[RMDB]
RNA sequence: GGGAACGACUCGAGUAGAGUCGAAAAUAGUUUCGUGACAAGAGAUUGAUAGACUCGCAAACUAAUGGCUUGAGUUAUGUGUCUUUAGUUUGUUAAAUGAAGACAUAACCUAUGGACGUAGACAAAUAUGUUGGCAGGUGUUUGGACGUGGGUUCGAGGCUAAAAUACAGUUCGCUGUAUUUUAGCCAAAAGAAACAACAACAACAAC
Reactivity to 2A3 in 0.01 (KOAc 150mM, MgCl2 10mM, bicine 150mM(pH8.5), 24C), signal-to-noise 4, nucleotides 027 to 156: u140a010g050u030u040u040c030g030u050g040a030c070a110a030g010a030g020a080u040u120g090a050u110a100g030a040c010u000c030g000c010a040a030a020c020u040a050a020u060g000g010c000u040u050g060a040g070u080u020a050u060g050u000g020u000c000u000u030u000a030g020u030u050u100g060u050u110a050a110a080u110g050a030a010g050a010c000a000u010a030a020c000c020u040a110u100g020g000a000c020g040u050a030g030a040c030a020a100a030u110a030u130g100u080u060g060g000c040a010g030g010u020g020u070u080u050g030g030a030c050g020u080g000g010g010u020u060c020g010a030
Reactivity to DMS in 0.01 (KOAc 150mM, MgCl2 10mM, bicine 150mM(pH8.5), 24C), signal-to-noise 2, nucleotides 027 to 156: u000a070g000u010u010u000c060g010u000g010a170c110a100a120g010a070g000a110u000u000g030a130u010a120g000a110c010u000c050g040c060a060a020a100c040u000a060a050u000g000g010c050u000u000g010a100g030u000u010a040u010g030u000g000u010c000u000u000u000a050g010u000u010u010g010u000u000a050a070a070u000g020a040a110g030a030c010a030u000a060a050c010c030u000a070u010g020g000a060c060g020u000a100g030a070c020a060a050a140u000a020u010g000u010u020g000g000c020a060g010g020u000g020u000u000u000g010g010a090c100g030u000g000g000g020u000u000c050g020a250